[RMDB]
RNA sequence: GGGAACGACUCGAGUAGAGUCGAAAACUAGAUGACUUUCUAUGUAUUCAUAUAUUCAAUAAUCAUUUACUAAGUGUGCAUGCUCAGUCACUAGGUACUGUGCUCAAAGAUGAAUAACAUGUAACCUCUGUGCAGUCUCAUGGAAGAGUUUAUAACAUAUGCAUUUAUCCUUCGGGAUAAAUGCAUAAAAAGAAACAACAACAACAAC
Reactivity to DMS in 0.01 (KOAc 150mM, MgCl2 10mM, bicine 150mM(pH8.5), 24C), signal-to-noise 1, nucleotides 027 to 156: c030u000a050g020a040u010g000a050c010u000u000u020c010u010a090u000g020u010a050u000u020c030a070u010a040u000a040u000u020c000a000a110u000a050a040u010c040a070u010u000u000a090c060u000a090a220g020u010g000u010g040c000a060u000g030c030u010c060a070g040u000c040a040c040u020a060g000g000u000a040c070u010g000u010g020c020u010c040a040a060a150g010a100u000g010a100a110u000a090a070c100a050u000g010u000a030a040c070c020u000c040u020g050u010g030c020a090g000u010c030u010c020a050u020g000g000a060a060g000a150g010u000u000u020a070u000a080a110c070a170
Reactivity to 2A3 in 0.01 (KOAc 150mM, MgCl2 10mM, bicine 150mM(pH8.5), 24C), signal-to-noise 1, nucleotides 027 to 156: c000u050a050g030a300u010g030a020c010u030u070u050c180u170a090u060g000u010a100u030u210c030a110u220a030u050a070u270u200c040a080a060u200a100a150u120c090a070u060u110u150a240c070u050a110a140g070u090g010u010g080c060a040u070g000c030u020c060a000g010u030c020a010c020u000a000g050g000u040a010c020u060g000u100g000c000u000c100a070a070a040g110a000u080g010a010a070u070a080a040c090a030u010g050u090a070a080c050c000u080c030u020g000u050g000c000a010g010u000c010u000c010a030u010g000g030a010a000g070a030g080u010u110u060a190u030a020a040c030a000
Structure probing data (DMS and 2A3) for a 207-nucleotide construct. The 2A3 profile rests on 432 reads. The RNA was probed in 150 mM KOAc, 10 mM MgCl2 and 150 mM bicine (pH 8.5) at 24 C.